[RMDB]
RNA sequence: GGGAACGACUCGAGUAGAGUCGAAAAGAAAAGUAGUCUAGUGGUUGGCUACGAACCACGAAAAGCACGUUAGGCCUUACGUGCGAAGGCCGAAAAGCAUACUAGAGUGUUUGCGACUCGAAAGAAAGGGUAUGAUAUACUUCGGUAUAUCAUACCCAAAAGAAACAACAACAACAAC
Reactivity to DMS in 0.01 (KOAc 150mM, MgCl2 10mM, bicine 150mM(pH8.5), 24C), signal-to-noise 5, nucleotides 027 to 126: g000a060a090a060a130g000u000a020g010u020c020u010a130g020u010g000g000u020u010g010g010c060u040a080c060g000a030a040c020c000a010c000g000a070a090a070a120g010c010a050c060g000u030u010a110g010g010c000c010u000u000a050c040g020u000g000c100g010a030a010g010g020c000c000g010a050a080a120a080g000c040a110u020a100c070u020a070g020a140g020u030g000u010u010u000g020c020g010a020c010u020c010g000a080a080a130g010a020a070a100
Reactivity to 2A3 in 0.01 (KOAc 150mM, MgCl2 10mM, bicine 150mM(pH8.5), 24C), signal-to-noise 5, nucleotides 027 to 126: g140a010a100a000a000g100u100a000g020u020c020u060a040g030u020g170g050u080u060g050g060c030u090a030c070g030a030a010c010c020a020c030g010a060a060a030a030g010c030a010c060g070u130u080a050g030g000c010c000u020u030a070c030g160u060g090c050g010a000a000g000g000c010c000g010a020a020a010a010g030c020a030u040a090c030u070a070g040a030g110u040g060u040u080u080g060c000g010a000c000u010c030g020a070a060a010g060a030a060a010
Chemical mapping of a 177-nucleotide RNA with DMS and 2A3. Source: RMDB library OK1LIB, as collected in RNAgym. The RNA was probed in 150 mM KOAc, 10 mM MgCl2 and 150 mM bicine (pH 8.5) at 24 C.